RNA sequence: GGGAACGACUCGAGUAGAGUCGAAAAGAUAUGGAUCCGUUCUCUAGGGAGUCCGAGGAUCGGAAACGAUCCGAGGACGAAGAACUAGAGAGACGGAUCCUAAGUCAAAGUGGUCUUCGGACCACAAGAUGUUACUACGGUUCGCCGUAGUAACAUCAAAAGAAACAACAACAACAAC
Reactivity to 2A3 in 0.01 (KOAc 150mM, MgCl2 10mM, bicine 150mM(pH8.5), 24C), signal-to-noise 2, nucleotides 027 to 126: g020a030u100a050u220g000g000a010u030c000c000g000u010u030c010u000c000u000a020g000g020g030a020g040u000c010c010g000a040g030g000a000u010c040g060g060a100a120a030c010g000a020u040c020c000g000a010g010g010a010c010g000a020a000g000a000a000c010u010a010g010a020g050a070g080a010c000g010g000a000u000c000c000u000a010a000g010u010c060a060a070a120g000u000g020g000u010c020u060u090c300g170g000a010c020c010a000c010a010a010
Reactivity to DMS in 0.01 (KOAc 150mM, MgCl2 10mM, bicine 150mM(pH8.5), 24C), signal-to-noise 3, nucleotides 027 to 126: g000a090u000a300u010g010g000a000u000c000c000g000u000u000c010u000c010u020a010g000g000g000a130g010u000c010c010g000a300g000g000a000u000c000g030g000a110a150a210c010g020a010u000c000c000g000a300g010g000a010c000g000a040a090g010a180a170c010u000a000g000a010g020a030g000a020c000g030g010a000u010c000c010u000a020a080g010u000c030a120a160a180g010u000g000g010u000c000u000u010c150g010g020a000c000c000a000c000a040a100